An RNA of 207 nucleotides, treated with 2A3 and DMS and read out base by base.
For DMS, 1,771 sequencing reads were counted.

[RMDB]
RNA sequence: GGGAACGACUCGAGUAGAGUCGAAAAUUGAUUACUUGGGUACCUGGAGAUACGAAUAUCGCUGUACGGGCUCACACAUUGAAUUUCAUUCAGAAGUUCGCGACAGAGCGCCGUGUGAUUAGUCGUGCAUUUAUUCAUGAGGAGGUCGAUUUAGACACUGAUAGGAUAGCUUCGGCUAUCCUAUCAGAAAAGAAACAACAACAACAAC
Reactivity to 2A3 in 0.01 (KOAc 150mM, MgCl2 10mM, bicine 150mM(pH8.5), 24C), signal-to-noise 2, nucleotides 027 to 156: u060u080g010a000u040u120a050c030u020u030g060g000g010u020a010c000c050u010g090g030a000g020a080u160a070c020g010a080a020u010a050u130c030g000c040u020g000u090a010c000g000g020g050c000u020c010a010c040a000c010a080u090u190g000a000a000u020u060u090c040a030u130u190c120a110g000a030a000g060u060u100c010g000c020g170a070c050a050g010a030g020c070g050c090c050g000u000g000u010g010a100u060u110a050g080u080c020g040u020g070c020a030u080u110u120a100u130u070c030a040u160g000a020g050g000a010g010g010u020c010g020a020u000u050u160a050g000a030c040a010
Reactivity to DMS in 0.01 (KOAc 150mM, MgCl2 10mM, bicine 150mM(pH8.5), 24C), signal-to-noise 1, nucleotides 027 to 156: u020u010g000a060u000u000a030c060u000u010g010g010g040u010a040c030c000u030g010g010a070g010a170u000a080c110g000a040a050u000a000u000c050g020c110u010g110u010a030c030g000g030g030c020u000c000a110c080a090c040a110u000u040g020a040a020u010u010u000c000a220u000u000c260a250g010a040a050g000u000u000c000g000c120g010a190c070a140g010a030g020c030g000c020c050g040u020g000u010g000a100u000u010a040g020u000c010g000u000g000c030a120u000u000u000a050u000u000c060a090u000g030a100g010g020a090g000g000u000c020g020a180u010u020u000a100g000a070c110a250